[RMDB]
RNA sequence: GGGAACGACUCGAGUAGAGUCGAAAAGAUAUGGACCAUCCGACAUUGUGAUGACCUCUUUCGGAAACGAAAGAGCAAGCAAUGAUCGGAGUGGUCCUAAGUCAAAAGUCUGUCUUCGGACAGACAACAAGCGAAUCUAGUUCGCUAGAUUCGCUUGAAAAGAAACAACAACAACAAC
Reactivity to 2A3 in 0.01 (KOAc 150mM, MgCl2 10mM, bicine 150mM(pH8.5), 24C), signal-to-noise 4, nucleotides 027 to 126: g010a020u080a070u170g000g000a010c000c000a000u000c000c010g000a000c000a000u000u030g020u060g140a300u140g110a090c030c000u000c020u000u010u000c010g020g030a080a080a070c000g000a010a020a000g000a000g020c010a080a060g000c000a000a040u100g120a300u000c010g000g010a010g000u020g010g000u000c000c000u000a050a020g020u000c020a080a060a100a090g000u000c000u010g000u000c010u040u070c230g120g010a000c010a000g010a010c000a000a000
Reactivity to DMS in 0.01 (KOAc 150mM, MgCl2 10mM, bicine 150mM(pH8.5), 24C), signal-to-noise 6, nucleotides 027 to 126: g010a050u010a300u000g000g010a010c010c000a100u000c000c000g000a030c010a010u000u010g010u010g010a110u010g000a130c300c000u000c010u000u000u010c000g020g000a160a110a240c010g020a010a000a010g020a020g010c030a040a140g000c010a010a010u000g020a120u000c000g010g000a010g020u010g030g000u000c000c000u000a010a080g010u010c050a100a120a130a130g000u000c000u000g010u000c000u000u030c270g000g000a020c000a010g000a010c000a070a140
Notes
This 177-nucleotide RNA was probed chemically with 2A3 and DMS. The reactions ran in a buffer of 150 mM KOAc, 10 mM MgCl2 and 150 mM bicine (pH 8.5), at 24 C. For DMS the reverse transcriptase was MarathonRT.